[RMDB]
RNA sequence: GGGAACGACUCGAGUAGAGUCGAAAAAAAAAGGUAAAACAGCCUGUGGGUGAAACACACCCACAGGGCCCAUGGGGCGCUAGCACUCUGGUAUCACGGUACCGUUGUGCGCCUGUUUUACCAAAAAGUAAUAAGUGAUGUUCGCAUCACUUAUUACAAAAGAAACAACAACAACAAC
Reactivity to DMS in 0.01 (KOAc 150mM, MgCl2 10mM, bicine 150mM(pH8.5), 24C), signal-to-noise 1, nucleotides 027 to 126: a010a040a050a090a070g000g030u010a010a000a010a020c010a020g000c000c000u000g050u000g000g010g040u000g000a110a110a100c240a250c000a010c000c000c000a010c010a000g000g010g000c010c000c000a020u000g030g010g000g020c000g000c010u010a040g040c010a000c010u000c000u000g040g070u000a000u000c020a100c230g060g000u000a000c000c020g000u000u000g000u000g040c000g010c010c000u000g000u000u000u000u010a000c000c010a000a010a020a060a030
Source: RMDB library 15KREP, as collected in RNAgym. This 177-nucleotide RNA was probed chemically with DMS. The reactions ran in a buffer of 150 mM KOAc, 10 mM MgCl2 and 150 mM bicine (pH 8.5), at 24 C.